[RMDB]
RNA sequence: GGGAACGACUCGAGUAGAGUCGAAAAGAUAUGGAAUUUCACACGCAGCUUGGAUUUAGUCUCGGAAACGAGACUUGUCAGCUGCGUUGUGAGAAUUCCUAAGUCAAAAGGUGCGUUCGCGCACCAAGACCAACAGGACGUUCGCGUCCUGUUGGUCAAAAGAAACAACAACAACAAC
Reactivity to DMS in 0.01 (KOAc 150mM, MgCl2 10mM, bicine 150mM(pH8.5), 24C), signal-to-noise 1, nucleotides 027 to 126: g000a090u000a300u000g000g010a000a000u000u000u000c010a000c020a020c000g060c000a040g000c030u010u000g010g000a020u030u030u000a000g030u000c000u020c000g000g000a150a070a300c000g000a000g030a000c000u030u000g010u000c010a060g000c000u000g010c000g000u010u000g010u000g010a030g010a020a050u010u000c000c030u010a040a220g000u040c060a040a010a100a130g040g000u010g000c020g000u000u000c300g010c000g000c030a010c000c000a110a040
Reactivity to 2A3 in 0.01 (KOAc 150mM, MgCl2 10mM, bicine 150mM(pH8.5), 24C), signal-to-noise 1, nucleotides 027 to 126: g000a000u130a070u160g010g000a030a000u030u000u000c010a010c010a000c000g000c000a010g000c030u300u300g190g000a070u300u300u280a010g000u000c010u000c010g020g060a090a090a000c030g010a010g030a000c020u020u010g000u000c000a010g020c000u000g010c030g030u000u030g000u000g000a010g050a030a000u000u000c000c020u020a190a040g090u030c010a000a040a040a120g030g010u000g010c010g010u060u150c300g050c030g000c210a010c000c000a000a020